[RMDB]
Chemical mapping of a 177-nucleotide RNA with DMS and 2A3. The DMS profile rests on 2,450 reads. The data come from the RNA Mapping Database (RMDB), library TTRDES. The reactions ran in a buffer of 150 mM KOAc, 10 mM MgCl2 and 150 mM bicine (pH 8.5), at 24 C. For 2A3 the reverse transcriptase was SuperScript II with manganese. Reactivities are given for positions 27 through 126.
RNA sequence: GGGAACGACUCGAGUAGAGUCGAAAAGAUAUGGAGCUCAAACGGGAGCUGCUAUCGGAAACGAUAGGACAGCAUCGAUCGUUUAGCUCCUAAGUCAAACCAAUCAAGACUUCGGUCUUGAUUGGAACAACCUAUACGACUUCGGUCGUAUAGGUUGAAAAGAAACAACAACAACAAC
Reactivity to DMS in 0.01 (KOAc 150mM, MgCl2 10mM, bicine 150mM(pH8.5), 24C), signal-to-noise 3, nucleotides 027 to 126: g010a030u010a090u000g010g010a000g020c010u000c300a000a000a000c010g030g040g000a090g020c010u000g000c000u000a000u000c010g000g010a040a040a020c000g000a010u000a000g000g000a240c000a020g010c000a300u000c300g000a090u010c010g000u000u000u000a020g010c000u000c000c010u000a000a060g000u000c010a090a160a170c000c000a010a000u000c000a000a010g010a020c000u000u020c300g050g020u000c000u000u010g000a020u000u000g000g000a090a080
Reactivity to 2A3 in 0.01 (KOAc 150mM, MgCl2 10mM, bicine 150mM(pH8.5), 24C), signal-to-noise 3, nucleotides 027 to 126: g000a010u040a020u050g000g000a000g000c010u180c290a060a070a000c050g070g090g090a090g000c020u020g000c000u020a000u000c000g010g000a000a040a000c000g020a010u020a020g120g250a110c000a010g000c020a080u300c230g230a300u020c020g020u010u010u050a010g010c000u000c000c000u000a010a000g000u000c040a020a080a160c010c000a000a010u000c010a000a000g000a000c010u070u250c300g110g000u000c000u020u000g000a000u010u000g000g000a010a010